[RMDB]
RNA sequence: GGGAACGACUCGAGUAGAGUCGAAAAAGCGAUCGCUACGGCGAUCGCAGUCCUCUGAUGACUUCAUGUUAGUGCCACCUGUCUGGGCCACGGAGAACCCAUGAUGGAACUGAGAAUCUGAGGAAAACCACCUGGCACUCUUCGGAGUGCCAGGUGGAAAAGAAACAACAACAACAAC
Reactivity to 2A3 in 0.01 (KOAc 150mM, MgCl2 10mM, bicine 150mM(pH8.5), 24C), signal-to-noise 1, nucleotides 027 to 126: a000g000c000g000a000u030c230g000c000u020a050c300g090g000c050g030a000u000c000g000c000a000g000u000c000c000u000c000u000g110a070u040g060a200c100u130u010c190a020u080g010u120u170a120g120u120g200c000c000a000c000c000u030g020u040c010u060g020g020g000c070c070a110c080g020g000a060g040a000a000c000c000c000a000u160g000a110u030g040g070a040a020c000u050g000a000g000a030a090u050c040u110g040a040g040g000a000a050a070a000
Structure probing data (2A3) for a 177-nucleotide construct.